[RMDB]
RNA sequence: GGGAACGACUCGAGUAGAGUCGAAAACUACCGCGUGGUGGUGCUGAGCUUCGAGCUGCUGCACGCCCCGGCCACGGUCUGCGGUCCGAAGAAAAGCACGAACUUAGUGAAGAACAAGUGCGUGAACAAUACCACCUCUGUUCGCAGAGGUGGUAUUAAAAGAAACAACAACAACAAC
Reactivity to DMS in 0.01 (KOAc 150mM, MgCl2 10mM, bicine 150mM(pH8.5), 24C), signal-to-noise 3, nucleotides 027 to 126: c090u000a080c020c020g010c090g020u000g000g060u000g020g020u000g040c020u000g000a070g030c000u000u030c190g020a120g020c020u000g030c030u010g040c050a050c030g000c020c010c020c070g010g000c070c050a060c030g000g000u000c080u000g020c050g010g020u000c080c050g030a150a080g000a060a060a120a110g000c000a000c000g010a040a010c000u000u010a160g010u010g000a130a160g010a140a020c040a040a010g000u000g010c020g000u000g000a080a100c130
Reactivity to 2A3 in 0.01 (KOAc 150mM, MgCl2 10mM, bicine 150mM(pH8.5), 24C), signal-to-noise 2, nucleotides 027 to 126: c020u050a030c000c030g070c040g020u060g010g040u020g040g090u020g000c020u050g000a010g010c000u090u170c220g090a100g020c010u250g030c030u050g000c030a000c000g010c000c000c020c010g050g030c030c030a050c050g000g050u000c050u110g020c040g070g020u000c010c030g140a140a110g030a060a160a010a000g050c010a010c010g030a050a020c030u030u070a080g020u030g090a130a270g070a090a020c010a030a010g000u010g030c030g000u010g000a070a010c050
This 177-nucleotide RNA was probed chemically with DMS and 2A3. The reactions ran in a buffer of 150 mM KOAc, 10 mM MgCl2 and 150 mM bicine (pH 8.5), at 24 C. Values are in units of 0.01, from 0 to 300, in steps of 10. Values cover nucleotides 27 to 126. For DMS, 2,719 sequencing reads were counted. Source: RMDB library OK2TRN, as collected in RNAgym.